[RMDB]
RNA sequence: GGGAACGACUCGAGUAGAGUCGAAAAAAGAAGACAGAGAUAGUGUUUUAAUUGAAUUGCAAGAUGAUAACCCACGCCUCGCUGUGGUUAAACGCACCAUUCAAGUUUCACAUUUUGCAUAUCCAGCCAGUAUGUUGUCGUUCGCGACAACAUACUGAAAAGAAACAACAACAACAAC
Reactivity to DMS in 0.01 (KOAc 150mM, MgCl2 10mM, bicine 150mM(pH8.5), 24C), signal-to-noise 2, nucleotides 027 to 126: a080a060g000a070a060g030a050c050a070g010a130g010a080u000a040g000u000g000u000u000u000u010a070a100u000u000g000a040a050u000u010g000c070a010a050g000a050u000g040a160u000a050a070c070c000c010a100c100g000c100c080u010c150g000c060u010g000u000g020g000u000u000a030a040a080c100g000c090a050c090c040a070u000u000c050a070a080g010u000u000u000c120a060c040a060u000u010u010u030g000c020a050u020a070u000c020c050a120g000c230
Reactivity to 2A3 in 0.01 (KOAc 150mM, MgCl2 10mM, bicine 150mM(pH8.5), 24C), signal-to-noise 2, nucleotides 027 to 126: a000a030g070a030a000g050a000c090a020g040a000g030a160u140a220g150u030g090u080u060u120u130a150a140u050u030g110a060a030u060u060g010c030a030a000g040a080u090g010a010u010a100a060c030c000c000a000c000g010c010c070u190c150g050c090u060g000u110g080g000u060u060a030a030a010c090g020c040a030c050c050a030u080u170c080a170a020g020u000u090u100c090a080c010a040u000u000u000u190g020c010a000u010a010u090c010c000a010g100c000